[RMDB]
RNA sequence: GGGAACGACUCGAGUAGAGUCGAAAAGGUUGCAUUCUUCCAUCUGAGUGCACUAUGUUUAGGGAUGCAGAGGGCCGUAUGACACCAUACUGCCAUGAUCCUACUGUUUUGCCUGGGGCUUUUGCGUACUACACUUUAUCUUCGGAUAAAGUGUAGUAAAAGAAACAACAACAACAAC
Reactivity to DMS in 0.01 (KOAc 150mM, MgCl2 10mM, bicine 150mM(pH8.5), 24C), signal-to-noise 5, nucleotides 027 to 126: g000g020u000u000g020c010a030u000u000c020u010u010c110c140a080u010c120u000g000a050g040u000g010c000a040c050u000a060u010g010u000u000u010a110g030g000g000a060u010g010c040a050g020a150g000g010g000c010c090g000u000a020u010g010a180c270a130c300c040a040u000a040c030u000g000c010c020a060u000g000a040u010c030c020u000a090c080u000g000u000u000u000u010g000c020c010u000g010g010g010g000c220u000u000u000u000g010c110g000u010
Reactivity to 2A3 in 0.01 (KOAc 150mM, MgCl2 10mM, bicine 150mM(pH8.5), 24C), signal-to-noise 4, nucleotides 027 to 126: g070g020u120u060g000c000a010u030u010c030u120u030c100c030a180u050c080u080g010a020g030u030g050c020a000c020u070a070u150g110u040u100u120a060g030g030g010a020u090g160c030a030g030a140g070g010g060c000c030g000u000a020u020g050a080c040a030c150c000a020u020a020c010u010g020c010c010a030u040g010a020u030c040c000u010a080c020u040g120u090u100u100u140g060c000c010u020g020g000g030g000c000u040u090u120u150g020c010g000u020
Chemical mapping of a 177-nucleotide RNA with DMS and 2A3. 2A3 adducts were read by reverse transcription with SuperScript II with manganese. In probing experiments dimethyl sulfate is read out at A N1 and C N3, which are open when not base-paired.